The record gives the reactivity of an RNA of 177 nucleotides to DMS.
The reactions ran in a buffer of 150 mM KOAc, 10 mM MgCl2 and 150 mM bicine (pH 8.5), at 24 C.
Values cover nucleotides 27 to 126.
[RMDB]
RNA sequence: GGGAACGACUCGAGUAGAGUCGAAAAAAAGAUAUGGAGCUCUGAGCCUUGGAUUUAUGGGACGGAAGUGGGUCGGAAACGACCCACUGGGAGUCCCAUUGUCAGGCUCUGAGCUCCUAAGUCAAAACUAAUCGUAGUACUUCGGUACUACGAUUAGAAAAGAAACAACAACAACAAC
Reactivity to DMS in 0.01 (KOAc 150mM, MgCl2 10mM, bicine 150mM(pH8.5), 24C), signal-to-noise 1, nucleotides 027 to 126: a090a110a160g000a060u010a300u020g010g000a000g010c010u000c000u020g030a000g010c000c000u030u000g010g000a060u020u010u000a000u000g010g010g000a010c000g000g010a300a010g030u000g000g000g030u000c000g000g000a150a120a140c030g030a010c000c020c000a000c000u000g000g000g000a300g010u010c000c000c030a000u010u000g010u020c020a030g030g020c020u020c000u020g010a000g020c030u000c000c000u000a020a040g030u000c060a140a120a120a150
About this RNA:
It was measured as part of the RMDB library TTRDES.